The record gives the reactivity of an RNA of 207 nucleotides to 2A3. Source: RMDB library OK3TST, as collected in RNAgym. 2A3 adducts were read by reverse transcription with SuperScript II with manganese.
RNA sequence: GGGAACGACUCGAGUAGAGUCGAAAAGUCUAUUUCUUUGACUAGCUUGUUUGACGUAUAAUCAAUACGUAGCAAAUAUAUAUGGUUGGGCGUGGUAGCUCACACUUGUAAUACCAAGACUUUAGGAGGCUGAGGCGGGUGGGUCACUUGAGUCCAACCGUAAAUGGAGUUUCGACUCCAUUUACGGAAAAGAAACAACAACAACAAC
Reactivity to 2A3 in 0.01 (KOAc 150mM, MgCl2 10mM, bicine 150mM(pH8.5), 24C), signal-to-noise 3, nucleotides 027 to 156: g030u040c040u060a120u150u180u130c110u100u090u070g030a040c000u010a030g060c040u120u160g040u080u060u090g090a020c010g020u050a020u040a120a130u200c100a090a000u020a040c020g020u020a040g050c020a050a020a000u120a020u040a020u020a020u160g090g000u060u020g000g000g000c040g040u020g040g010u090a030g040c020u010c010a000c000a010c040u020u070g040u080a080a110u040a170c030c030a060a000g020a070c020u050u050u100a070g030g030a080g060g000c050u040g030a020g010g030c110g060g060g040u080g010g010g000u000c020a030c040u040u060g020a010g040u000c020c010a000a030